An RNA of 177 nucleotides, treated with DMS and 2A3 and read out base by base. As a SHAPE reagent, 2A3 marks flexible, mostly unpaired nucleotides at the ribose 2'-OH.
RNA sequence: GGGAACGACUCGAGUAGAGUCGAAAAGAUAUGGAUCGUGUGUAGACAUGAUCUAUGGUCGGAAACGACCAGAGAUCAACAGCUACCACGAUCCUAAGUCAAACAAUAGGGGUUCGCCCCUAUUGAAUCUAGUGUGAUACUUCGGUAUCACACUAGAAAAAGAAACAACAACAACAAC
Reactivity to DMS in 0.01 (KOAc 150mM, MgCl2 10mM, bicine 150mM(pH8.5), 24C), signal-to-noise 3, nucleotides 027 to 126: g000a000u000a020u010g010g000a020u000c010g030u000g000u010g020u000a010g010a020c130a140u030g000a020u000c000u000a030u000g000g020u000c010g010g000a000a010a010c000g010a000c000c000a020g000a020g000a010u010c000a100a140c230a180g010c000u010a000c000c000a000c020g000a000u000c000c000u000a000a060g000u000c000a210a130a260c020a010a000u000a010g000g010g010g010u010u020c300g030c000c000c010c010u000a010u000u000g000a080a120
Reactivity to 2A3 in 0.01 (KOAc 150mM, MgCl2 10mM, bicine 150mM(pH8.5), 24C), signal-to-noise 2, nucleotides 027 to 126: g010a010u010a010u060g010g010a000u000c010g000u030g030u060g010u000a000g050a070c210a300u300g000a010u000c000u010a030u010g010g000u000c010g000g000a020a000a000c020g000a000c020c010a000g040a000g000a010u050c030a040a210c200a180g010c010u000a000c000c010a000c010g000a000u010c000c000u000a000a000g010u010c020a150a000a080c020a010a000u000a000g010g000g050g020u010u060c300g220c020c000c000c010u010a010u020u000g000a020a050